[RMDB]
This 177-nucleotide RNA was probed chemically with 2A3 and DMS. It was measured as part of the RMDB library OK2TRN.
RNA sequence: GGGAACGACUCGAGUAGAGUCGAAAAGCGUGAACGCAUCGAGGUCGCCGUGUGGCACGAAGUGGUCGGCGAAUCCCAGCGCGAUGGCGUCGGCGCCGGAAAACGGCGCUCCAGUCAGGGCGGCGUGACGGCAUAUUGUAUUCGUACAAUAUGCCGUAAAAGAAACAACAACAACAAC
Reactivity to 2A3 in 0.01 (KOAc 150mM, MgCl2 10mM, bicine 150mM(pH8.5), 24C), signal-to-noise 5, nucleotides 027 to 126: g020c030g060u110g060a100a020c020g000c030a030u060c040g060a100g020g120u060c030g020c070c070g150u190g050u140g120g030c030a010c070g000a100a010g080u090g050g070u040c030g020g010c000g010a040a070u050c010c010c000a010g030c020g000c020g050a050u040g030g020c010g020u050c020g010g000c000g000c000c010g050g000a150a260a040a020c000g010g000c000g000c010u000c000c010a000g020u020c010a000g040g120g060c020g020g010c030g030u050g070
Reactivity to DMS in 0.01 (KOAc 150mM, MgCl2 10mM, bicine 150mM(pH8.5), 24C), signal-to-noise 7, nucleotides 027 to 126: g020c030g010u000g020a060a060c040g010c020a060u000c040g010a130g010g010u000c050g020c030c060g020u010g020u010g010g020c030a060c050g010a060a070g040u000g010g020u000c030g010g010c010g010a070a110u000c010c000c010a160g000c040g010c020g000a110u000g020g000c020g010u000c190g000g010c010g010c000c000g000g000a060a050a110a180c010g010g010c000g010c010u000c050c090a170g010u000c060a070g000g000g010c040g010g010c050g010u010g000

2A3 adducts were read by reverse transcription with SuperScript II with manganese. The reactions ran in a buffer of 150 mM KOAc, 10 mM MgCl2 and 150 mM bicine (pH 8.5), at 24 C.